Chemical mapping of a 207-nucleotide RNA with DMS and 2A3. It was measured as part of the RMDB library M2RFOK. The RNA was probed in 150 mM KOAc, 10 mM MgCl2 and 150 mM bicine (pH 8.5) at 24 C. 2A3 adducts were read by reverse transcription with SuperScript II with manganese.
RNA sequence: GGGAACGACUCGAGUAGAGUCGAAAAGCUCUGGAAUUGAGGCCCCUCGAACAAUAAUCCAAAACUACUUCGCAGAGUAAUCUGCCGAAUCGUAGGAUGCCCAUUACUAUCUAUUUUUGGAGCAUCUAAAACUGUCAGUGCUUCGGCACUGACAGAAGGAUCUAAUAGAGUUCGCUCUAUUAGAUCCAAAAGAAACAACAACAACAAC
Reactivity to DMS in 0.01 (KOAc 150mM, MgCl2 10mM, bicine 150mM(pH8.5), 24C), signal-to-noise 1, nucleotides 027 to 156: g040c000u010c030u000g020g020a080a110u000u000g000a080g000g000c000c010c010c000u000c070g010a080a140c040a040a140u010a110a100u000c030c030a060a060a140a160c010u000a040c080u000u000c000g010c000a020g010a070g000u020a130a160u020c020u010g000c050c050g010a020a040u000c080g000u010a100g000g010a080u020g000c050c010c020a020u000u010a050c110u000a120u000c120u000a170u020u000u010u000u000g020g000a120g000c000a050u000c010u010a010a040a090a120c010u010g010u000c040a040g020u000g050c020u000u010c300g070g010c000a020c000u010g000a000c000a010g010a050a160
Reactivity to 2A3 in 0.01 (KOAc 150mM, MgCl2 10mM, bicine 150mM(pH8.5), 24C), signal-to-noise 4, nucleotides 027 to 156: g020c010u010c010u010g040g080a160a070u180u030g030a020g050g010c010c000c000c030u090c080g070a060a040c060a070a090u170a040a060u050c040c040a010a030a070a100c030u030a000c010u000u030c010g000c000a000g000a020g020u080a110a170u020c000u010g070c110c050g030a010a010u080c060g010u020a030g080g000a000u010g000c000c000c010a020u030u020a090c040u090a090u220c040u100a210u080u090u000u020u030g030g000a130g020c000a000u010c000u050a010a040a030a110c010u000g000u000c000a010g010u010g000c010u030u090c120g050g000c000a000c000u010g000a000c000a000g000a000a010